[RMDB]
RNA sequence: GGGAACGACUCGAGUAGAGUCGAAAAGAUAUGGACCGGAACGAAGAACAUACGUAACAUCUUUCGGAAACGAAAGUGGUAUGGGAGUUCGUCCUAAGUCAAAGAACUGCGCUUCGGCGCAGUUCAACGUUAGUGAAUCGUUCGCGAUUCACUAACGAAAAGAAACAACAACAACAAC
Reactivity to 2A3 in 0.01 (KOAc 150mM, MgCl2 10mM, bicine 150mM(pH8.5), 24C), signal-to-noise 3, nucleotides 027 to 126: g050a050u210a060u300g060g000a020c090c180g200g010a070a050c030g110a160a070g030a060a000c000a020u030a010c010g050u050a050a050c030a280u170c020u020u010u020c020g040g050a100a060a040c010g000a010a010a000g000u010g010g000u030a010u020g010g000g050a080g180u030u030c010g000u010c010c000u040a140a020g040u010c060a160a010a120g000a000a010c000u000g000c000g020c010u100u150c300g130g000c000g000c010a010g000u000u010c000a000a000
Reactivity to DMS in 0.01 (KOAc 150mM, MgCl2 10mM, bicine 150mM(pH8.5), 24C), signal-to-noise 4, nucleotides 027 to 126: g020a110u010a210u000g000g000a040c030c180g010g010a030a030c010g010a070a050g010a230a200c010a010u000a020c000g010u000a040a080c190a040u020c000u000u000u010c010g000g000a130a090a160c010g010a010a000a000g020u000g010g010u000a010u020g010g000g000a150g010u000u000c000g010u000c000c000u010a090a100g000u000c020a050a120a150g000a010a010c010u000g000c000g030c010u000u000c230g050g000c000g020c000a010g010u000u000c010a040a080